An RNA of 177 nucleotides, treated with 2A3 and DMS and read out base by base. For 2A3, 97,920 sequencing reads were counted. In probing experiments dimethyl sulfate is read out at A N1 and C N3, which are open when not base-paired.

RNA sequence: GGGAACGACUCGAGUAGAGUCGAAAAGUGCCACCACCAGCGUGUGCUGCCCGGCGGAGAUGGCGUCCCACGCGCCGAGCUGGGCCGACGUGGGGCCGGGGAAGGCGCCGUCGAACCACUGCGCGGAGCAUUAGUAAUGAUUCGUCAUUACUAAUGCAAAAGAAACAACAACAACAAC
Reactivity to 2A3 in 0.01 (KOAc 150mM, MgCl2 10mM, bicine 150mM(pH8.5), 24C), signal-to-noise 9, nucleotides 027 to 126: g050u040g040c010c010a050c010c010a040c010c020a030g030c030g050u120g060u110g090c060u050g010c010c010c000g010g010c030g030g100a150g010a110u150g040g010c020g030u050c020c030c000a010c030g010c000g000c000c030g030a040g030c060u070g010g030g000c010c020g050a070c020g030u090g010g030g030g000c020c020g010g000g020g050a100a100g050g010c040g010c020c000g020u030c020g010a030a020c010c010a030c040u070g000c040g000c040g050g060a060
Reactivity to DMS in 0.01 (KOAc 150mM, MgCl2 10mM, bicine 150mM(pH8.5), 24C), signal-to-noise 9, nucleotides 027 to 126: g010u010g010c030c010a080c030c030a120c060c050a090g010c050g020u010g010u010g020c070u000g010c020c020c020g010g020c030g010g010a130g010a070u000g010g010c020g010u000c020c020c030a090c080g010c030g010c020c050g000a160g010c070u000g010g000g020c080c020g000a030c040g010u000g010g000g010g020c060c030g010g000g010g010a130a130g010g010c020g010c020c030g000u000c040g010a100a100c060c040a070c050u000g000c050g010c030g010g010a200

2A3 is a SHAPE reagent: it acylates the 2'-hydroxyl of flexible nucleotides of all four kinds.